[RMDB]
RNA sequence: GGGAACGACUCGAGUAGAGUCGAAAAUCUAACUUCUUCGGAAGUUAGAAAAUAAAAUCAGCGGAAAAUAUCGAGGCGUAAUUACCGCUGAACGCCUCGAUAAAAGAUUGUGCUUCGGCACAAUCAACGUCAACAAUAGGUUCGCCUAUUGUUGACGAAAAGAAACAACAACAACAAC
Reactivity to 2A3 in 0.01 (KOAc 150mM, MgCl2 10mM, bicine 150mM(pH8.5), 24C), signal-to-noise 2, nucleotides 027 to 126: u020c000u000a000a010c000u000u020c010u030u050c180g090g000a000a000g000u000u000a000g000a000a010a000a000u090a010a040a020a060u090c060a020g020c040g120g050a090a090a070a090u100a010u010c000g000a000g000g000c000g000u030a010a120u110u030a110c000c010g000c000u030g020a000a000c000g000c000c000u000c000g000a000u020a000a060a000a020g000a000u000u000g000u000g010c000u010u060c230g110g000c000a000c020a020a000u000c000a010a020
Reactivity to DMS in 0.01 (KOAc 150mM, MgCl2 10mM, bicine 150mM(pH8.5), 24C), signal-to-noise 2, nucleotides 027 to 126: u000c000u000a010a000c000u000u000c000u020u010c200g050g040a010a010g010u000u000a000g000a020a030a110a140u020a020a050a100a050u010c050a040g000c040g000g000a120a080a100a140u010a010u000c010g020a000g000g000c010g000u010a020a100u000u000a100c060c010g020c010u000g010a070a010c000g000c000c010u000c010g020a000u000a010a070a050a100g000a000u010u000g030u000g010c010u000u000c160g010g020c000a010c000a010a000u000c000a070a180
The record gives the reactivity of an RNA of 177 nucleotides to 2A3 and DMS. The reactions ran in a buffer of 150 mM KOAc, 10 mM MgCl2 and 150 mM bicine (pH 8.5), at 24 C. Source: RMDB library M2PK50, as collected in RNAgym.